[RMDB]
RNA sequence: GGGAACGACUCGAGUAGAGUCGAAAAUCCGACACUUCGGUGUCGGAAAAAAAGCGUACUACGUCUGCGAAGAACACGAACUACUAGAAGUGUCCCAAAUAGGACACCUAGCGUGGGAGCAGACGUAUCGCAAAAAAGAGGCUCUUCGGAGCCUCAAUCUAACCUUAUACUUCGGUAUAAGGUUAGAAAAAGAAACAACAACAACAAC
Reactivity to 2A3 in 0.01 (KOAc 150mM, MgCl2 10mM, bicine 150mM(pH8.5), 24C), signal-to-noise 2, nucleotides 027 to 156: u000c000c000g000a000c000a000c000u090u080c200g140g000u000g000u000c000g010g020a180a000a000a000a000a030a000g050c040g020u080a080c000u000a000c030g000u030c000u000g020c000g130a290a020g030a110a000c010a010c020g070a180a020c050u160a020c020u030a170g040a300a050g150u020g020u010c030c050c010a290a300a160u300a140g000g000a000c010a000c000c000u000a010g000c050g030u000g000g020g000a040g000c010a010g000a000c000g010u000a000u010c000g000c000a020a020a020a010a020a020g020a030g000g010c010u000c040u100u140c280g100g000a000g000c010c000u000c000a000a010
Reactivity to DMS in 0.01 (KOAc 150mM, MgCl2 10mM, bicine 150mM(pH8.5), 24C), signal-to-noise 1, nucleotides 027 to 156: u000c010c000g060a000c000a040c010u000u000c300g060g090u000g000u000c000g020g010a000a000a060a100a030a080a140g040c050g000u020a070c080u000a010c000g010u010c010u000g060c000g010a140a130g050a110a100c030a060c050g010a120a250c010u010a150c020u010a000g000a150a110g010u000g020u000c010c000c030a050a220a120u000a110g010g000a040c000a000c030c000u000a050g000c010g010u030g000g010g000a300g020c020a020g000a030c000g010u000a010u000c020g000c000a000a130a030a090a060a070g020a020g000g010c000u000c000u000u010c220g010g000a020g000c020c000u020c020a000a070